[RMDB]
RNA sequence: GGGAACGACUCGAGUAGAGUCGAAAAUUGUCCGGGUUCGCCCGGACAAAGCGGGUGGCGACCGGAGGCCUCCUCCCAGGCGAUCCCACGCCUCGCUCCGGAGCGUGAUGACCUUCGGGUCAUCAAACAACUACCAGUAUUUCGAUACUGGUAGUUGAAAAGAAACAACAACAACAAC
Reactivity to 2A3 in 0.01 (KOAc 150mM, MgCl2 10mM, bicine 150mM(pH8.5), 24C), signal-to-noise 3, nucleotides 027 to 126: u030u020g000u000c010c000g010g000g000u020u050c200g080c010c000c000g010g010a000c000a000a000a000g020c000g020g050g030u080g020g000c030g040a150c010c020g000g010a010g030g030c010c030u010c010c010u030c020c010c000a010g000g020c010g010a080u060c010c000c000a040c020g010c010c010u020c070g060c010u000c010c000g020g010a040g080c110g070u080g010a010u010g010a010c000c020u030u040c170g060g020g000u000c000a000u000c000a000a000a000
Reactivity to DMS in 0.01 (KOAc 150mM, MgCl2 10mM, bicine 150mM(pH8.5), 24C), signal-to-noise 5, nucleotides 027 to 126: u000u000g010u000c000c000g010g000g030u000u010c210g010c010c000c000g000g000a000c010a000a020a060g010c180g010g010g010u000g010g010c040g020a120c020c020g000g010a050g000g000c070c020u010c030c010u000c010c020c050a040g010g020c000g000a100u000c020c010c020a290c020g000c010c000u000c090g010c020u000c020c010g000g010a220g020c220g000u000g000a010u000g000a030c000c000u000u010c200g020g000g010u000c010a000u010c000a030a090a180

Structure probing data (2A3 and DMS) for a 177-nucleotide construct. 2A3 adducts were read by reverse transcription with SuperScript II with manganese.